The record gives the reactivity of an RNA of 177 nucleotides to DMS and 2A3. The reactions ran in a buffer of 150 mM KOAc, 10 mM MgCl2 and 150 mM bicine (pH 8.5), at 24 C. It was measured as part of the RMDB library OK2TST. High 2A3 reactivity points to a flexible backbone, as in loops and unpaired stretches. For DMS the reverse transcriptase was MarathonRT.
RNA sequence: GGGAACGACUCGAGUAGAGUCGAAAAGAACCAAGAGAAUCUGCAAUAACAAUGUCGGGAACCUUACAGGACAGGUACUCCAUGAGGUACAUGUAGAUCAUCGUGGUGAGGUACACCGGAAAGAGGAGUCAUUUAGGCGAUUCGUCGCCUAAAUGACAAAAGAAACAACAACAACAAC
Reactivity to DMS in 0.01 (KOAc 150mM, MgCl2 10mM, bicine 150mM(pH8.5), 24C), signal-to-noise 1, nucleotides 027 to 126: g040a220a210c010c000a120a050g010a140g010a080a050u000c000u010g070c060a050a100u040a070a100c080a050a070u000g000u000c010g020g000g000a100a020c000c010u000u010a060c040a120g010g000a040c110a020g050g000u020a120c040u000c050c040a040u000g000a080g020g000u010a060c060a020u000g010u000a070g000a150u010c040a080u000c070g000u050g000g030u000g000a030g030g000u000a050c130a190c030c060g000g000a030a040a000g010a070g050g010a290
Reactivity to 2A3 in 0.01 (KOAc 150mM, MgCl2 10mM, bicine 150mM(pH8.5), 24C), signal-to-noise 1, nucleotides 027 to 126: g030a040a010c010c010a060a010g070a010g020a100a110u010c040u080g000c060a030a120u080a090a040c030a000a150u130g060u170c010g000g010g040a050a020c000c000u010u020a040c040a070g030g050a040c050a060g060g020u060a100c000u050c120c050a080u120g010a110g060g050u040a050c040a100u080g050u000a060g040a070u020c010a030u150c080g110u010g020g010u010g000a000g000g010u050a090c130a060c040c000g000g060a060a070a010g080a030g090g020a030